Structure probing data (DMS) for a 177-nucleotide construct.
RNA sequence: GGGAACGACUCGAGUAGAGUCGAAAAGCAGGGCAAGCGCCAGCAGAUGGCCACGGAUCGAGUGCAGGAGCCCGAGCGCAUGGCCCCAGGCUUCCUUGACCUGCAGCAUCAGCCCGGUGUCGAGGAAUCGCACGUCCUAUUUCGAUAGGACGUGCGAAAAAGAAACAACAACAACAAC
Reactivity to DMS in 0.01 (KOAc 150mM, MgCl2 10mM, bicine 150mM(pH8.5), 24C), signal-to-noise 1, nucleotides 027 to 126: g040c010a080g010g000g020c010a050a040g030c290g000c030c040a070g030c250a120g000a110u000g050g020c000c030a080c000g030g020a170u020c030g000a080g010u000g020c100a160g010g030a230g020c030c000c040g010a050g000c050g000c060a080u030g000g010c000c000c020c140a140g010g000c020u000u000c090c000u010u000g000a000c010c000u000g000c040a100g010c090a050u000c070a110g010c000c070c000g030g020u010g020u000c030g020a050g020g010a110a060

DMS adducts were read by reverse transcription with MarathonRT. It was measured as part of the RMDB library OK2TRN.